This 177-nucleotide RNA was probed chemically with DMS and 2A3. For DMS the reverse transcriptase was MarathonRT. High DMS reactivity at an A or C suggests that its Watson-Crick edge is free. 2A3 adducts were read by reverse transcription with SuperScript II with manganese. The reactions ran in a buffer of 150 mM KOAc, 10 mM MgCl2 and 150 mM bicine (pH 8.5), at 24 C. The DMS profile rests on 3,268 reads.
RNA sequence: GGGAACGACUCGAGUAGAGUCGAAAAUUCAGGAACCAGAUUCUCACAGACAAGUAAGGUAUGAUCGCGAGAUAGUUCUGCCCAGGUACAGGAUCCUAGUAGAGGCAGUUCUAUAGGAGGCUUAUUAACUAUACGGUCACUUCGGUGACCGUAUAGUAAAAGAAACAACAACAACAAC
Reactivity to DMS in 0.01 (KOAc 150mM, MgCl2 10mM, bicine 150mM(pH8.5), 24C), signal-to-noise 2, nucleotides 027 to 126: u020u050c090a060g010g010a050a080c020c080a080g000a100u030u000c020u000c010a090c090a120g020a090c110a030a090g020u010a040a110g030g020u040a060u010g000a050u000c060g020c100g000a100g000a010u010a070g000u000u000c030u000g010c010c010c000a090g010g000u010a040c180a050g000g000a060u000c020c020u000a060g050u030a000g010a070g000g000c070a060g000u010u010c010u000a050u000a030g000g020a080g000g010c040u000u030a030u030u000a070
Reactivity to 2A3 in 0.01 (KOAc 150mM, MgCl2 10mM, bicine 150mM(pH8.5), 24C), signal-to-noise 3, nucleotides 027 to 126: u140u030c030a010g120g010a010a050c010c010a030g070a100u010u040c000u020c010a080c010a000g090a070c010a110a080g160u220a090a050g150g000u120a120u150g090a160u100c050g030c030g080a030g030a180u050a030g010u030u000c010u010g000c010c020c030a050g090g000u080a050c080a130g120g110a080u090c000c000u060a130g080u150a020g040a060g090g000c070a000g020u020u000c030u010a040u040a000g030g040a070g030g050c000u030u110a060u060u050a210